[RMDB]
The record gives the reactivity of an RNA of 207 nucleotides to 2A3 and DMS. The reactions ran in a buffer of 150 mM KOAc, 10 mM MgCl2 and 150 mM bicine (pH 8.5), at 24 C. For DMS the reverse transcriptase was MarathonRT.
RNA sequence: GGGAACGACUCGAGUAGAGUCGAAAAUAUCGUGCCAACUCAAUUACAGUUUCGAAUACAUCUGUGUUUUCAGUUUCAAAUACAUGGGUCAUUGAUCGGUGGCGUGUGGAUGUCGGUGGUCUUGCCACCUCGAACGUUUCAUUUAGCGUGAAACAGGCCACCGAUAUAGGUUCGCCUAUAUCGGUGGAAAAGAAACAACAACAACAAC
Reactivity to 2A3 in 0.01 (KOAc 150mM, MgCl2 10mM, bicine 150mM(pH8.5), 24C), signal-to-noise 4, nucleotides 027 to 156: u160a020u070c030g020u050g030c020c000a080a070c050u040c090a070a100u120u120a160c050a080g010u010u050u160c080g080a120a050u130a130c030a100u070c060u030g030u010g050u060u040u000u110c040a050g030u040u070u130c080a090a080a040u120a050c050a060u050g070g000g000u040c040a050u010u100g050a050u100c080g010g040u010g030g010c040g030u050g020u050g060g040a060u090g040u100c030g000g030u000g010g000u020c030u020u110g010c000c000a010c000c020u050c040g060a060a050c060g010u020u020u000c040a070u080u120u160a060g050c060g030u010g010a050a010a010c020a010g090g030
Reactivity to DMS in 0.01 (KOAc 150mM, MgCl2 10mM, bicine 150mM(pH8.5), 24C), signal-to-noise 1, nucleotides 027 to 156: u000a060u000c040g050u010g050c020c060a040a070c030u000c040a050a100u010u010a110c060a090g030u000u000u010c030g030a120a160u010a140c030a020u000c020u020g060u000g000u000u010u010u000c000a140g040u000u000u000c030a030a080a090u000a040c020a060u000g000g000g020u000c070a100u000u000g010a080u000c050g030g010u010g020g010c050g060u000g040u000g020g020a090u010g020u000c030g010g010u000g000g030u000c090u030u000g040c080c030a040c010c020u000c000g000a080a050c070g020u000u000u000c030a030u000u000u030a160g040c190g000u000g010a040a040a030c000a150g050g000